[RMDB]
RNA sequence: GGGAACGACUCGAGUAGAGUCGAAAAGGGCGGAUCGAGCGCCGGCUGGCCAGCGUCGAGAACCUGAACAACCGGCUGUGGGCCUACGUGCGUCAGCAGCACGAUCACGCGUACCGCAGCGGGUACGCGGCCAUUCGCUGUUCGCAGCGAAUGGCCGAAAAGAAACAACAACAACAAC
Reactivity to 2A3 in 0.01 (KOAc 150mM, MgCl2 10mM, bicine 150mM(pH8.5), 24C), signal-to-noise 2, nucleotides 027 to 126: g030g020g040c060g000g120a070u070c020g010a040g090c000g000c020c000g010g000c040u060g070g000c030c010a030g030c030g040u020c030g040a020g020a180a030c020c020u050g030a050a010c040a060a020c010c000g060g040c040u040g030u090g040g010g000c000c040u030a070c010g020u030g050c030g050u100c080a110g070c010a010g000c000a030c020g030a030u090c070a040c140g030c030g020u040a190c000c000g070c070a040g040c050g030g030g020u050a000c050g010
Reactivity to DMS in 0.01 (KOAc 150mM, MgCl2 10mM, bicine 150mM(pH8.5), 24C), signal-to-noise 3, nucleotides 027 to 126: g000g010g010c040g010g010a100u000c040g010a160g010c050g010c040c010g010g010c060u010g010g020c030c030a080g000c110g030u010c060g010a160g000a140a120c040c020u000g010a070a080c090a080a090c020c030g020g010c020u010g030u010g000g000g000c090c040u010a070c040g000u000g000c050g010u000c110a080g020c150a180g020c030a040c020g010a120u000c070a130c070g010c050g020u000a030c010c000g030c090a130g020c130g000g000g000u000a010c090g000

Structure probing data (2A3 and DMS) for a 177-nucleotide construct. In probing experiments dimethyl sulfate is read out at A N1 and C N3, which are open when not base-paired. The 2A3 profile rests on 2,445 reads.